[RMDB]
RNA sequence: GGGAACGACUCGAGUAGAGUCGAAAACCCUAAGCCCAUAAACGGUAUGUGAAGAUGCAUACUACGGGAUCGUGUACUUGUACAAAUGAUAAUCUCACAGGAGAUUAUUAAUUAUAAGAAGGAGAAGGUCAGCAGCACAAUUCGUUGUGCUGCUGACAAAAGAAACAACAACAACAAC
Reactivity to 2A3 in 0.01 (KOAc 150mM, MgCl2 10mM, bicine 150mM(pH8.5), 24C), signal-to-noise 2, nucleotides 027 to 126: c000c010c010u000a070a000g160c020c020c000a060u080a010a270a000c060g000g010u000a000u000g030u000g150a280a300g030a210u300g000c010a000u000a010c000u030a020c000g000g000g000a000u010c000g050u030g060u100a100c040u000u050g020u010a000c010a040a000a020u060g000a000u000a010a000u070c000u010c000a050c090a300g210g000a010g030a000u000u000a000u000u000a010a000u020u020a040u000a100a000g070a000a070g090g030a120g010a160a000g130
Structure probing data (2A3) for a 177-nucleotide construct. 2A3 adducts were read by reverse transcription with SuperScript II with manganese.